An RNA of 207 nucleotides, treated with 2A3 and read out base by base. Reactivities are given for positions 27 through 156. The RNA was probed in 150 mM KOAc, 10 mM MgCl2 and 150 mM bicine (pH 8.5) at 24 C. The data come from the RNA Mapping Database (RMDB), library OK3TST.
RNA sequence: GGGAACGACUCGAGUAGAGUCGAAAAAUACUCAGUCUAUUAGCAUGGACCUUAUGAAGUUAAGUGCUGUGGUUGAUAAGUGCCUUGAGACUUUCAAUGUACUUUACCCUAAUGGAGACACCAGAGUUCCUGCCAAGGACAGUCAAGAAAUCACAUCCCUUACGAGCACAUUCGUGUGCUCGUAAGGAAAAGAAACAACAACAACAAC
Reactivity to 2A3 in 0.01 (KOAc 150mM, MgCl2 10mM, bicine 150mM(pH8.5), 24C), signal-to-noise 1, nucleotides 027 to 156: a000u180a130c010u020c040a020g070u000c020u040a190u150u210a080g010c000a020u100g000g000a070c000c000u130u020a140u300g090a050a030g040u120u120a070a070g010u030g050c030u000g020u080g020g010u000u010g000a070u000a130a000g000u000g000c020c000u030u010g070a200g040a300c030u000u300u180c030a020a020u020g000u030a030c000u030u020u110a060c000c000c010u090a060a110u130g020g010a060g030a020c030a000c030c020a000g000a040g020u020u020c000c000u000g060c010c010a050a010g040g000a020c020a000g000u050c000a000a070g010a040a110a020u140c040a030c000a130u080c000